[RMDB]
Chemical mapping of a 207-nucleotide RNA with DMS and 2A3.

RNA sequence: GGGAACGACUCGAGUAGAGUCGAAAAUGGCUCUGCGCCAGUCGGGUGUGAGAAGGGCCUAGUUCACUAUGGUGGUAAACAAGCUUCUCACGCAUGAGCAACCCGGCUAGUCCGCCACACCAGCAGUCGCACAGUGUGGCAGGGCAACAUCAUCGAACAUACAUCACACCUUCGGGUGUGAUGUAUGAAAAGAAACAACAACAACAAC
Reactivity to DMS in 0.01 (KOAc 150mM, MgCl2 10mM, bicine 150mM(pH8.5), 24C), signal-to-noise 1, nucleotides 027 to 156: u000g000g030c020u000c030u000g000c000g000c100c030a030g000u000c000g010g000g000u010g000u000g000a020g000a030a040g000g030g020c040c030u000a100g000u000u000c020a020c030u000a060u000g040g050u000g030g030u000a040a030a020c000a060a120g010c020u010u000c040u000c010a000c050g080c050a100u000g000a100g000c000a090a300c010c010c030g020g070c000u000a100g010u000c000c000g000c000c010a010c010a010c000c000a290g050c000a140g090u010c200g000c040a150c130a080g040u000g020u010g000g000c050a020g000g020g000c000a090a070c050a070u010c100a160u000c110g000a150a250
Reactivity to 2A3 in 0.01 (KOAc 150mM, MgCl2 10mM, bicine 150mM(pH8.5), 24C), signal-to-noise 3, nucleotides 027 to 156: u200g020g010c010u010c040u080g040c060g030c020c010a000g010u020c000g000g030g000u070g010u020g000a000g000a000a000g040g040g010c020c050u020a040g020u050u080c060a050c080u110a180u270g150g030u060g010g040u170a140a070a030c090a140a020g070c000u000u000c000u010c000a000c000g010c040a040u140g090a010g020c020a020a060c010c030c000g020g000c020u040a030g030u010c000c000g000c000c000a000c000a000c000c020a020g000c030a060g140u300c090g040c030a080c040a120g000u030g010u050g000g000c030a140g000g000g000c010a020a020c050a120u150c000a040u080c020g030a010a030

The 2A3 profile rests on 2,150 reads.